Conditions: 150 mM KOAc, 10 mM MgCl2 and 150 mM bicine (pH 8.5), 24 C. Chemical mapping of a 177-nucleotide RNA with DMS and 2A3. For DMS the reverse transcriptase was MarathonRT. Values are in units of 0.01, from 0 to 300, in steps of 10. It was measured as part of the RMDB library M2PK50.
RNA sequence: GGGAACGACUCGAGUAGAGUCGAAAAACAUUGGCCUUCGGGCCAAUGUACUGGAAAUAAACCCGAAAGGCUACGCAUUCCUUAUUUGGCGAAAGCCUGCGAGAUUAUGUAAGUUCGCUUACAUAAAAUAUCUUCCUCAGUUCGCUGAGGAAGAUAUAAAAGAAACAACAACAACAAC
Reactivity to DMS in 0.01 (KOAc 150mM, MgCl2 10mM, bicine 150mM(pH8.5), 24C), signal-to-noise 2, nucleotides 027 to 126: a030c010a010u000u000g010g040c010c010u000u010c170g010g020g020c000c000a000a000u010g010u000a040c150u000g020g000a060a110a110u000a080a120a140c030c000c020g000a070a040a040g000g020c030u000a200c030g000c010a080u000u000c110c060u010u000a130u000u000u000g000g020c030g010a170a060a140g020c000c000u000g010c160g010a130g000a120u000u000a020u000g010u000a020a000g010u000u030c240g030c000u000u010a010c000a000u000a020a020a080
Reactivity to 2A3 in 0.01 (KOAc 150mM, MgCl2 10mM, bicine 150mM(pH8.5), 24C), signal-to-noise 2, nucleotides 027 to 126: a000c000a000u010u000g000g000c000c010u000u010c300g030g010g010c000c010a000a000u000g000u000a000c070u080g080g080a050a050a120u150a060a100a050c000c010c010g040a170a120a000g040g000c020u040a020c060g040c020a060u140u220c020c010u260u290a300u220u250u190g090g010c000g050a220a020a000g000c000c000u000g010c020g050a160g000a040u090u000a000u010g000u010a000a000g000u000u060c150g050c090u010u000a010c020a010u010a030a060a000